The record gives the reactivity of an RNA of 207 nucleotides to 2A3. The 2A3 profile rests on 953 reads. Values cover nucleotides 27 to 156.
RNA sequence: GGGAACGACUCGAGUAGAGUCGAAAAACUAAUCCAAAGCAAGUAUAGGAGAACAGGUUUUUAAAUAUUUUUAGGCAGAUAAAAAAUAGUAUUUGACAGUCUAACACUAACUGAACAAUAAGUGUUAAAAAGUCGUCUCUGUUCGCAGAGACGACAAGUCGACAUACAAGUUCGCUUGUAUGUCGACAAAAGAAACAACAACAACAAC
Reactivity to 2A3 in 0.01 (KOAc 150mM, MgCl2 10mM, bicine 150mM(pH8.5), 24C), signal-to-noise 1, nucleotides 027 to 156: a000c040u060a080a030u040c010c010a060a000a010g040c020a050a000g010u050a050u130a120g020g010a030g020a070a040c060a100g100g010u080u020u020u100u160a050a090a030u050a100u060u060u010u090u050a030g060g000c010a010g060a160u140a050a070a000a040a020a030u050a030g030u050a150u110u020u040g070a040c000a000g000u020c000u010a000a000c000a030c000u010a020a000c000u020g100a040a000c010a020a020u070a030a000g000u010g010u000u000a000a160a000a020a000g010u010c000g000u000c000u000c000u010g050u050u020c050g000c070a000g000a000g000a000c000g000a000c000a000a000